[RMDB]
RNA sequence: GGGAACGACUCGAGUAGAGUCGAAAACUCACGUACGCGCGACACGGCCGUCUCACUACGUACAGCAGAGGCCGGCCUCAGCGCGUAGGCCUAGUACAUGGCCUGAUGCUCGGAUCUGAGGCCGCGAAGUUUGGGAGAGUUUCGACUCUCCCAAACUAAAAGAAACAACAACAACAAC
Reactivity to 2A3 in 0.01 (KOAc 150mM, MgCl2 10mM, bicine 150mM(pH8.5), 24C), signal-to-noise 2, nucleotides 027 to 126: c000u000c000a020c040g100u090a010c050g050c000g000c030g080a040c010a040c150g060g050c000c010g170u030c010u000c020a080c110u210a050c090g220u150a130c140a040g050c000a000g030a030g090g000c100c120g040g040c010c000u020c010a010g000c000g000c000g020u000a000g000g000c000c020u120a070g130u100a070c100a130u180g030g000c010c000u050g050a070u140g000c040u060c170g110g060a210u120c050u050g000a030g020g070c040c000g010c050g080a140
Reactivity to DMS in 0.01 (KOAc 150mM, MgCl2 10mM, bicine 150mM(pH8.5), 24C), signal-to-noise 2, nucleotides 027 to 126: c030u000c040a130c130g010u000a010c070g000c090g000c060g010a160c180a110c180g000g020c030c020g020u000c010u010c020a120c040u000a070c220g000u010a100c180a080g000c120a060g000a170g000g010c080c020g030g010c000c000u000c060a030g000c060g000c030g040u000a000g010g010c060c010u010a160g010u000a100c270a080u010g010g010c000c000u000g010a040u010g000c040u020c090g020g010a120u000c040u010g000a050g000g010c040c000g000c090g000a110

Annotation
Conditions: 150 mM KOAc, 10 mM MgCl2 and 150 mM bicine (pH 8.5), 24 C. The record gives the reactivity of an RNA of 177 nucleotides to 2A3 and DMS.